[RMDB]
RNA sequence: GGGAACGACUCGAGUAGAGUCGAAAACCAGACUGAUUCGUCAGUCUGGGCUUAAGUCCCAUGGGGUAGUGGCCAAUCCUGUUGCCUUCUGGGGGCAACGACCCAGGUUCGAAUCCUGGUGGGACUACCAUAACGCGCAACCGUUCGCGGUUGCGAACAUAGAUUACAUAUUCGUAUGUAAUCUAUGAAAAGAAACAACAACAACAAC
Reactivity to 2A3 in 0.01 (KOAc 150mM, MgCl2 10mM, bicine 150mM(pH8.5), 24C), signal-to-noise 7, nucleotides 027 to 156: c000c000a000g000a000c000u000g000a020u040u060c220g040u020c120a000g000u010c000u000g010g000g000c010u140u150a070a000g010u010c000c010c000a000u030g020g000g010g020u020a030g010u110g120g120c170c020a100a020u050c010c030u040g010u010u000g010c050c000u110u080c210u270g300g020g000g000g000c000a000a010c000g000a000c000c000c000a000g000g000u010u020c020g010a010a020u010c000c000u000g000g010u010g000g000g030a010c000u010a010c000c010a080u110a130a070c120g010c000g000c050a000a000c010c000g050u070u080c240g000c010g090g000u000u000g000c000g000a020a010
Reactivity to DMS in 0.01 (KOAc 150mM, MgCl2 10mM, bicine 150mM(pH8.5), 24C), signal-to-noise 3, nucleotides 027 to 156: c000c000a020g020a040c000u000g000a040u000u000c260g020u000c000a000g020u010c010u000g010g010g000c080u010u000a080a100g020u010c000c000c010a140u000g010g010g010g010u000a090g010u010g010g030c050c010a110a140u010c050c000u000g020u000u000g000c000c020u000u000c110u020g000g020g010g000g010c000a020a020c040g000a080c060c000c010a110g000g010u000u000c070g020a300a100u000c000c010u000g030g020u000g000g010g020a070c030u000a050c060c020a080u000a080a140c130g030c020g030c000a020a020c010c000g020u010u010c300g020c030g030g010u000u000g030c000g010a010a120